[RMDB]
RNA sequence: GGGAACGACUCGAGUAGAGUCGAAAAGAUAUGGACUGUUUGAGCUUUUGACGAGCGCUAUUCGGAAACGAAUAGCAGCUCGAUAAGCUUGACAGUCCUAAGUCAAACUCGCGCUUCGGCGCGAGAAGACUAUUCGGUAGUUCGCUACCGAAUAGUCAAAAGAAACAACAACAACAAC
Reactivity to 2A3 in 0.01 (KOAc 150mM, MgCl2 10mM, bicine 150mM(pH8.5), 24C), signal-to-noise 4, nucleotides 027 to 126: g020a000u050a030u130g000g000a020c020u020g090u180u220u300g040a010g030c040u090u180u300u300g300a280c120g010a000g000c010g000c000u000a000u000u000c010g010g020a040a030a050c000g010a000a010u010a000g010c000a010g000c000u000c000g000a010u020a030a000g010c000u010u010g000a000c000a000g000u000c000c000u000a010a010g000u000c010a020a030a120c000u000c000g000c000g020c030u050u110c300g180g000c000g010c000g000a000g000a000a000
Reactivity to DMS in 0.01 (KOAc 150mM, MgCl2 10mM, bicine 150mM(pH8.5), 24C), signal-to-noise 3, nucleotides 027 to 126: g000a010u000a300u000g010g000a010c010u000g010u000u010u010g020a010g020c000u000u000u000u000g020a230c140g000a000g030c010g000c000u000a000u000u010c000g010g000a070a070a190c010g030a020a000u000a000g020c020a020g040c000u010c000g010a040u010a020a000g010c010u000u000g000a010c000a000g000u000c000c000u010a000a080g010u000c010a130a140a280c000u000c000g020c000g000c020u000u010c270g010g010c020g010c010g010a010g010a050a100
Source: RMDB library TTRDES, as collected in RNAgym. The record gives the reactivity of an RNA of 177 nucleotides to 2A3 and DMS. The 2A3 profile rests on 8,254 reads. For DMS, 3,367 sequencing reads were counted. DMS adducts were read by reverse transcription with MarathonRT.